[RMDB]
RNA sequence: GGGAACGACUCGAGUAGAGUCGAAAACAUGUACGCUUCAAGUGCGGCGGUCGGCCAGAGUCGACAGGCUUCCUAGCGCGUAGGAUGUCCGAUGGGGAUGACAUCGUGGUGGUGUGCCGCGCCACCGUCUUCGGUGGGUCUUCGGGCCUACUGAAGAAAAAGAAACAACAACAACAAC
Reactivity to DMS in 0.01 (KOAc 150mM, MgCl2 10mM, bicine 150mM(pH8.5), 24C), signal-to-noise 9, nucleotides 027 to 126: c070a070u020g010u010a040c050g000c020u010u020c100a080a090g010u020g010c030g000g010c010g010g000u000c010g010g010c020c180a120g000a120g010u000c010g000a030c040a070g000g000c020u000u000c020c010u000a080g010c260g010c070g000u010a040g000g000a030u000g010u010c020c040g010a110u020g000g010g000g010a110u020g000a060c040a030u010c050g020u020g000g010u000g000g010u000g010u020g020c020c020g010c030g000c000c000a010c000c000g010
Reactivity to 2A3 in 0.01 (KOAc 150mM, MgCl2 10mM, bicine 150mM(pH8.5), 24C), signal-to-noise 9, nucleotides 027 to 126: c040a030u100g040u110a020c020g010c030u080u120c090a090a040g040u030g070c010g010g000c010g030g000u010c010g000g000c010c040a050g020a030g060u020c010g010a020c010a010g030g020c000u020u010c000c000u020a020g030c060g000c010g070u010a020g020g040a010u010g020u010c010c020g030a090u120g040g020g030g060a080u110g020a030c010a050u060c080g090u060g020g010u010g000g020u060g050u110g030c000c010g000c000g000c000c000a000c000c000g010

The record gives the reactivity of an RNA of 177 nucleotides to DMS and 2A3. Conditions: 150 mM KOAc, 10 mM MgCl2 and 150 mM bicine (pH 8.5), 24 C. It was measured as part of the RMDB library OK1LIB.